RNA sequence: GGGAACGACUCGAGUAGAGUCGAAAAGAAUUAUAAGUAACAUUUGUACUUUAAAGCUUAUAUGUUUUAACCCUUUCAACAACUCUAUGAGGUAUGUGAUAUUAUUUUCAUGUUAUAGAUGAGAAAAUGGAAGUUCAGAGUCAUGUCUAAGGUCACACAAGUGGAGGAAUUUCGAUUCCUCCACUUGAAAAGAAACAACAACAACAAC
Reactivity to DMS in 0.01 (KOAc 150mM, MgCl2 10mM, bicine 150mM(pH8.5), 24C), signal-to-noise 1, nucleotides 027 to 156: g020a210a100u000u000a030u020a000a110g020u010a120a180c020a110u000u000u010g020u000a070c060u000u030u000a080a140a300g000c000u000u000a030u010a070u010g000u000u000u000u000a090a280c020c000c000u000u000u000c070a050a080c050a070a100c030u010c040u000a110u000g030a110g020g020u010a000u000g030u000g010a090u000a080u000u000a160u000u000u020u000c030a060u000g020u000u000a160u000a100g010a070u000g000a090g000a020a030a090a070u000g010g010a080a070g050u010u000c010a070g010a050g000u000c040a020u000g000u000c060u000a090a050g010g010u000c050a040c160a100
Record summary
This 207-nucleotide RNA was probed chemically with DMS.